[RMDB]
RNA sequence: GGGAACGACUCGAGUAGAGUCGAAAACUUUUGGAUUAGGGGAUAGAAUAGGAGCUCUAAAAGCGAGUUGGAAUCAACCUUUAGAACUGGCUUAUACACCACGUUUAUCCCAAUCUGCUAACGGAGGAUUAAUACAGGCGUUCGCGCCUGUAUUAAUAAAAGAAACAACAACAACAAC
Reactivity to DMS in 0.01 (KOAc 150mM, MgCl2 10mM, bicine 150mM(pH8.5), 24C), signal-to-noise 1, nucleotides 027 to 126: c040u000u000u000u010g000g000a070u000u000a160g030g000g020g010a050u000a040g030a070a050u000a180g000g010a120g060c060u000c040u000a040a070a040a030g010c090g000a130g000u000u000g000g000a180a140u000c090a020a030c120c100u000u000u020a060g010a030a030c050u000g000g020c020u010u000a120u010a060c220a030c070c040a120c150g010u010u010u010a030u020c000c000c030a070a020u000c050u010g010c100u040a020a040c140g000g010a180g000g010